Annotation:
Source: RMDB library OK3TST, as collected in RNAgym. Structure probing data (2A3) for a 207-nucleotide construct. The RNA was probed in 150 mM KOAc, 10 mM MgCl2 and 150 mM bicine (pH 8.5) at 24 C. 2A3 adducts were read by reverse transcription with SuperScript II with manganese.

RNA sequence: GGGAACGACUCGAGUAGAGUCGAAAAGGGAUAAGAGAGUACUCUUAUCCCCACGUCGUUGGUGACAACGACGAUUAUCCGGUGGCCACCCGCCCGGGCCACCGUUACUCCACUCCACUCCUUCGGGACUGGUUUGGAGGAACAUAACCGGGCUAAACGAUUACUGCAUAUUCGUAUGCAGUAAUCGAAAAGAAACAACAACAACAAC
Reactivity to 2A3 in 0.01 (KOAc 150mM, MgCl2 10mM, bicine 150mM(pH8.5), 24C), signal-to-noise 2, nucleotides 027 to 156: g010g000g000a000u000a010a000g020a000g060a010g160u170a240c010u000c000u000u010a000u000c010c000c000c000a030c000g000u000c000g000u000u000g000g060u100g030a030c000a010a000c010g000a000c010g000a030u090u090a060u140c040c010g000g000u000g000g020c010c000a060c040c080c070g000c010c010c000g000g000g000c000c000a000c000c000g000u000u070a010c000u000c000c000a000c000u000c000c010a010c000u000c000c000u020u050c190g050g000g000a000c010u000g000g000u000u000u000g000g000a000g000g000a000a010c030a020u140a030a070c060c020g000g000g000c000u020a050a040a000